This 177-nucleotide RNA was probed chemically with 2A3 and DMS. The reactions ran in a buffer of 150 mM KOAc, 10 mM MgCl2 and 150 mM bicine (pH 8.5), at 24 C. For DMS, 2,931 sequencing reads were counted. Values cover nucleotides 27 to 126.
RNA sequence: GGGAACGACUCGAGUAGAGUCGAAAAGACCGUCAGUUAGACGGAAGAAGUGCAUAAAUCCACAACGGAAGACCAAAUAAUGCACAAAUGUGGAUAAGCGUACGGAUCUACGUGCGCUAAACGUGAGCGCAUUAUGGGAGUUCGCUCCCAUAAUGCGAAAAGAAACAACAACAACAAC
Reactivity to 2A3 in 0.01 (KOAc 150mM, MgCl2 10mM, bicine 150mM(pH8.5), 24C), signal-to-noise 2, nucleotides 027 to 126: g080a000c000c000g000u010c010a050g110u100u300a030g000a000c000g000g020a040a060g180a030a000g010u000g010c000a020u120a130a220a060u050c000c000a050c010a100a040c070g080g010a000a020g010a040c040c040a000a150a000u270a020a010u160g000c000a000c020a000a120a000u070g030u020g120g000a060u090a100a060g020c000g000u000a000c000g020g010a040u030c030u070a040c050g010u000g000c000g020c000u020a000a040a000c020g040u020g030a060g060
Reactivity to DMS in 0.01 (KOAc 150mM, MgCl2 10mM, bicine 150mM(pH8.5), 24C), signal-to-noise 3, nucleotides 027 to 126: g000a200c000c000g000u000c000a240g050u020u040a050g030a010c000g000g000a060a160g010a150a050g050u030g000c000a040u040a040a130a020u000c020c030a070c120a060a150c250g040g010a150a070g000a300c070c020a120a050a070u000a120a060u010g000c000a040c010a070a040a040u000g010u030g000g010a050u000a080a030g010c000g000u000a010c000g020g030a150u080c220u030a060c000g070u010g040c010g000c000u000a010a030a050c110g000u020g030a040g020